[RMDB]
An RNA of 177 nucleotides, treated with 2A3 and DMS and read out base by base. Conditions: 150 mM KOAc, 10 mM MgCl2 and 150 mM bicine (pH 8.5), 24 C. DMS (dimethyl sulfate) methylates the pairing face of unpaired adenines and cytosines. For 2A3 the reverse transcriptase was SuperScript II with manganese. DMS adducts were read by reverse transcription with MarathonRT.
RNA sequence: GGGAACGACUCGAGUAGAGUCGAAAAUCUAACUCAUUCGUGAGUUAGAGUGAGCGCAGCGACCAUUGGGCCGGUCGCGCGCUGUCGGUGCCGCGCGUGGCGAUAGUGCUUGCUUCGGCAAGCACAAGAUAUGUCUUUCGUUCGCGAAAGACAUAUCAAAAGAAACAACAACAACAAC
Reactivity to 2A3 in 0.01 (KOAc 150mM, MgCl2 10mM, bicine 150mM(pH8.5), 24C), signal-to-noise 5, nucleotides 027 to 126: u010c000u010a000a010c000u000c000a020u080u070c210g130u050g030a010g010u010u000a010g000a010g030u130g090a020g000c020g010c050a100g000c050g000a000c000c000a030u030u080g070g070g020c040c040g010g000u000c010g010c000g000c000g000c010u020g070u060c060g020g100u090g010c010c000g070c020g010c070g100u140g030g000c030g020a080u140a090g000u000g000c000u000u000g010c000u030u030c170g050g000c000a000a000g010c000a000c000a000a000
Reactivity to DMS in 0.01 (KOAc 150mM, MgCl2 10mM, bicine 150mM(pH8.5), 24C), signal-to-noise 7, nucleotides 027 to 126: u000c000u000a000a000c000u000c000a040u000u010c210g020u000g010a020g010u000u000a000g000a030g010u010g000a040g020c010g010c000a090g030c000g010a010c000c010a110u000u000g010g010g030c300c210g000g000u000c000g020c010g010c000g010c000u000g010u000c040g000g010u000g010c040c010g010c140g010c100g020u000g010g020c040g010a090u010a090g010u000g010c000u000u000g010c000u000u010c210g020g000c000a000a000g000c000a000c000a030a060